Chemical mapping of a 207-nucleotide RNA with DMS and 2A3. The data come from the RNA Mapping Database (RMDB), library OK3TST. For DMS the reverse transcriptase was MarathonRT. The DMS profile rests on 1,386 reads. For 2A3 the reverse transcriptase was SuperScript II with manganese.
[RMDB]
RNA sequence: GGGAACGACUCGAGUAGAGUCGAAAAGUGCGCUUGUCAAAAUAGGAGACAGGUGGUGGCAACCAGGGACUUAUAGGGGACCUUACAUCUACAGACCAACAGAUGCCCCCUUACCGUAUACAGGAAGAUAUGACCUAAAUUUUGAUAGGUGGGUCACCAGGCUGUAAAAGUUCGCUUUUACAGCCUGAAAAGAAACAACAACAACAAC
Reactivity to DMS in 0.01 (KOAc 150mM, MgCl2 10mM, bicine 150mM(pH8.5), 24C), signal-to-noise 1, nucleotides 027 to 156: g020u010g040c030g030c030u010u000g050u030c020a050a110a150a210u000a100g030g030a190g000a150c010a050g020g040u000g010g050u000g010g000c070a060a140c010c040a090g000g000g000a110c070u000u000a030u000a100g040g010g030g000a090c040c140u000u020a080c050a030u000c040u000a300c050a090g010a090c150c060a010a070c080a050g000a050u010g010c010c020c000c000c030u000u000a010c080c000g070u000a120u010a110c070a080g010g000a070a140g000a140u010a110u010g010a080c070c020u000a040a100a150u020u020u000u010g010a180u020a050g050g000u000g040g000g000u020c010a130c090
Reactivity to 2A3 in 0.01 (KOAc 150mM, MgCl2 10mM, bicine 150mM(pH8.5), 24C), signal-to-noise 2, nucleotides 027 to 156: g130u110g030c010g000c040u060u030g010u050c030a090a080a040a110u110a190g020g080a140g030a010c040a050g000g040u050g010g010u030g020g030c000a030a010c010c010a050g080g000g000a040c040u150u160a110u130a180g060g000g000g000a020c000c060u020u160a030c020a000u000c000u040a030c040a110g120a130c030c040a030a080c030a100g020a040u050g030c000c000c000c030c010u000u020a050c000c000g000u030a030u010a140c060a000g000g020a020a060g020a060u090a130u150g010a010c000c000u050a040a160a250u090u180u040u110g020a040u050a130g090g000u020g030g030g010u030c000a000c000